[RMDB]
RNA sequence: GGGAACGACUCGAGUAGAGUCGAAAAGGGAAGGAAGCGUUGCCAACCGAUUUCUUCUCAGCUGUCUUGCUACCUUCCGGAACGUCUGCACCUUCAGUGUCGUUGUCUUCAUCAACGAGAGAGGAAAACUUCGCACGAGCCCAGUUGACGACCGCGGAUACAUAGUCAUCUUCGGAUGACUAUGUAUAAAAGAAACAACAACAACAAC
Reactivity to 2A3 in 0.01 (KOAc 150mM, MgCl2 10mM, bicine 150mM(pH8.5), 24C), signal-to-noise 3, nucleotides 027 to 156: g010g000g000a030a000g000g010a070a010g020c020g080u130u160g170c040c020a080a050c050c020g000a010u030u030u000c000u040u020c010u020c020a020g010c060u020g030u080c070u120u100g010c000u030a090c020c000u000u080c020c000g000g030a110a050c040g020u030c000u060g000c030a070c040c000u080u110c070a130g030u040g060u120c030g020u030u020g010u020c050u140u080c060a130u100c010a050a110c080g040a040g000a010g020a020g120g060a030a030a040a080c040u120u070c080g000c040a040c050g020a010g020c040c010c020a010g010u040u090g040a030c030g040a020c000c040g010c050g100g010
Reactivity to DMS in 0.01 (KOAc 150mM, MgCl2 10mM, bicine 150mM(pH8.5), 24C), signal-to-noise 2, nucleotides 027 to 156: g000g000g040a070a030g000g000a050a060g010c040g020u000u010g050c100c100a110a130c180c020g010a080u000u000u000c050u000u030c070u010c010a120g030c020u010g030u000c040u010u000g030c000u000a100c030c020u010u000c010c010g010g010a110a070c020g010u000c010u020g000c020a110c040c030u000u010c060a150g020u010g020u000c030g040u000u000g010u010c050u010u010c060a090u000c040a080a200c070g010a160g000a200g000a080g010g010a030a020a050a100c060u000u000c020g040c040a140c050g010a150g030c050c020c000a130g030u000u000g000a090c070g010a080c020c020g030c070g000g020

Background: Chemical mapping of a 207-nucleotide RNA with 2A3 and DMS. It was measured as part of the RMDB library OK3TST. The RNA was probed in 150 mM KOAc, 10 mM MgCl2 and 150 mM bicine (pH 8.5) at 24 C. The DMS profile rests on 4,638 reads.